[RMDB]
RNA sequence: GGGAACGACUCGAGUAGAGUCGAAAAUAAACCGACACAGGUAGUCGAGGAGAGUAUCCUCAGGCGCUCGAGUGAUUCAUGGCUAAGGAACUCGGCAAAAUGGCCUCGUAACUUCGGGAGAAGAGGCCGCUGACUAAGCGUUCGCGCUUAGUCAGCGAAAAGAAACAACAACAACAAC
Reactivity to DMS in 0.01 (KOAc 150mM, MgCl2 10mM, bicine 150mM(pH8.5), 24C), signal-to-noise 2, nucleotides 027 to 126: u050a030a140a160c000c000g030a060c080a110c110a140g000g000u060a050g040u000c060g000a010g000g030a030g020a250g020u030a120u000c000c000u000c000a040g000g030c030g000c000u000c020g050a070g000u010g000a070u020u020c080a020u000g000g040c130u020a090a070g000g020a030a020c060u000c000g020g000c100a130a030a100a100u020g050g000c000c000u010c010g010u000a050a160c030u000u010c050g000g000g020a180g010a110a130g000a020g000g000c010
Reactivity to 2A3 in 0.01 (KOAc 150mM, MgCl2 10mM, bicine 150mM(pH8.5), 24C), signal-to-noise 3, nucleotides 027 to 126: u140a000a020a040c010c020g060a000c070a000c010a070g010g170u150a050g040u040c010g000a000g030g000a060g010a000g070u280a040u060c000c000u050c000a030g080g000c070g000c030u100c050g070a060g000u040g030a110u070u080c070a100u160g180g000c040u100a050a100g020g010a020a030c010u040c050g030g000c050a000a010a010a120u140g040g000c000c000u000c000g010u050a050a040c010u050u090c150g090g030g000a010g000a020a000g000a020g010g000c020
Structure probing data (DMS and 2A3) for a 177-nucleotide construct. The reactions ran in a buffer of 150 mM KOAc, 10 mM MgCl2 and 150 mM bicine (pH 8.5), at 24 C. 2A3 adducts were read by reverse transcription with SuperScript II with manganese. The 2A3 profile rests on 1,300 reads. The data come from the RNA Mapping Database (RMDB), library RFM100. Values cover nucleotides 27 to 126. For DMS the reverse transcriptase was MarathonRT.